[RMDB]
RNA sequence: GGGAACGACUCGAGUAGAGUCGAAAAUAACAUAUUUGCCCUCUUUUCAUCCACUAGUGUAAGAGUAUCUAAGAAUUUGACUUCCUGCAUAGUAGGUUUUCUCUUGGUAAAUUUGAUAAUAUUUUACGUAGAUGACGAUAUUCGUAUCGUCAUCUACAAAAGAAACAACAACAACAAC
Reactivity to 2A3 in 0.01 (KOAc 150mM, MgCl2 10mM, bicine 150mM(pH8.5), 24C), signal-to-noise 2, nucleotides 027 to 126: u040a020a030c010a050u150a100u060u040u090g020c000c020c020u040c030u090u010u030u110c030a020u000c020c020a070c120u100a080g030u030g000u130a040a040g020a020g060u040a040u060c010u060a100a100g090a190a160u060u060u130g010a010c000u050u030c040c000u000g000c000a000u020a040g030u030a030g000g000u000u000u010u020c060u010c000u000u030g000g030u080a100a090a160u080u040u070g070a060u090a300a030u110a110u070u160u050u040a050c030
Reactivity to DMS in 0.01 (KOAc 150mM, MgCl2 10mM, bicine 150mM(pH8.5), 24C), signal-to-noise 2, nucleotides 027 to 126: u000a080a140c080a080u010a110u000u000u000g010c010c000c010u000c030u000u000u000u000c050a070u000c050c120a070c110u000a050g010u000g010u000a020a030g010a090g010u000a050u010c080u000a080a130g000a080a120u000u010u000g010a060c070u010u000c050c010u000g000c030a040u000a060g040u010a050g000g000u000u000u000u000c010u000c040u000u000g000g030u010a030a060a060u000u000u000g000a130u000a060a090u000a070u000u010u000u010a130c160
Description
The data come from the RNA Mapping Database (RMDB), library OK2TST. Structure probing data (2A3 and DMS) for a 177-nucleotide construct. The reactions ran in a buffer of 150 mM KOAc, 10 mM MgCl2 and 150 mM bicine (pH 8.5), at 24 C. Reactivities are rounded to 0.1 and cut off at 0 and 3. Values cover nucleotides 27 to 126. For DMS, 1,546 sequencing reads were counted. For 2A3, 1,106 sequencing reads were counted. 2A3 adducts were read by reverse transcription with SuperScript II with manganese.